An RNA of 177 nucleotides, treated with 2A3 and DMS and read out base by base. It was measured as part of the RMDB library TTRDEL. The 2A3 profile rests on 1,505 reads. Reactivities are rounded to 0.1 and cut off at 0 and 3.

RNA sequence: GGGAACGACUCGAGUAGAGUCGAAAAGAUAUGGAGGGCACAGCGAUAAGCAGUGAUCGGAAACGAUCAUACUGCUUUUGACGCUGGAUCUCCUAAGUCAAAAGGGGCUGUCUUCGGACAGCCCCAAGUUAUGCCAAUGGUUCGCCAUUGGCAUAACAAAAGAAACAACAACAACAAC
Reactivity to 2A3 in 0.01 (KOAc 150mM, MgCl2 10mM, bicine 150mM(pH8.5), 24C), signal-to-noise 1, nucleotides 027 to 126: g010a000u080a010u160g000g000a040g040g000g000c190a040c000a170g000c000g050a130u010a190a000g020c000a010g030u010g000a000u000c020g000g010a010a050a020c000g000a000u000c000a010u150a050c010u030g040c010u010u020u050u110g080a040c020g010c000u000g000g020a010u030c000u000c000c010u010a060a000g070u070c000a000a070a180a260g020g020g000g060c000u000g020u010c120u130u160c300g140g020a000c000a000g000c010c000c010c000a000a010
Reactivity to DMS in 0.01 (KOAc 150mM, MgCl2 10mM, bicine 150mM(pH8.5), 24C), signal-to-noise 2, nucleotides 027 to 126: g010a040u000a300u010g010g000a020g010g020g000c140a220c010a010g030c010g020a150u000a030a010g010c000a020g010u000g000a000u000c000g000g000a100a100a120c000g020a000u000c020a070u000a130c030u000g000c000u000u000u010u010g020a150c070g000c020u000g000g000a190u000c000u000c000c000u010a030a110g010u010c040a060a040a120a120g000g020g000g020c010u000g000u000c000u000u010c200g000g000a000c000a000g000c000c000c000c000a000a010